[RMDB]
RNA sequence: GGGAACGACUCGAGUAGAGUCGAAAAGCGGAAUUCGUUCCGCAUUCGCUCCUAAGUCCCACAACAGCGGAUCUCGAGGCAACAGCCAUUCGGAAACGAAUGGACAUGCCUAAGAUCCGACAUGUGGGAUAUGGACCAAGACAUUCUUCGGAAUGAACAAAGGAAUGGGAUUCGUCCCAUUCCUUUGAAAAGAAACAACAACAACAAC
Reactivity to DMS in 0.01 (KOAc 150mM, MgCl2 10mM, bicine 150mM(pH8.5), 24C), signal-to-noise 2, nucleotides 027 to 156: g000c000g000g000a010a070u000u020c300g040u010u000c010c000g100c010a070u010u000c000g020c070u000c010c000u000a120a280g010u010c000c000c010a030c000a070a110c100a170g050c020g000g020a030u000c020u000c040g000a090g000g010c000a050a090c060a230g000c000c000a010u000u040c000g000g000a220a150a300c000g000a000a000u010g010g010a060c090a210u000g010c000c010u010a070a030g020a000u000c010c000g020a000c070a120u010g010u000g010g000g020a000u000a020u010g000g010a080c040c060a080a150g000a170c050a100u000u000c000u010u000c280g080g000a070a030u000g050a050a180
Reactivity to 2A3 in 0.01 (KOAc 150mM, MgCl2 10mM, bicine 150mM(pH8.5), 24C), signal-to-noise 5, nucleotides 027 to 156: g000c010g000g040a040a020u110u100c200g060u180u000c010c010g000c000a010u040u100c050g050c090u020c000c000u020a080a030g060u000c000c010c010a020c000a070a070c040a030g080c000g000g000a000u000c010u030c120g230a020g000g000c010a040a030c020a160g040c000c000a000u000u000c010g040g010a060a090a070c010g000a000a000u000g010g030a020c010a070u040g000c000c000u000a010a000g000a000u000c000c000g020a030c010a060u040g000u000g000g000g000a000u000a000u000g010g010a010c030c020a060a040g060a050c020a020u040u040c030u130u090c210g160g030a190a010u300g040a060a040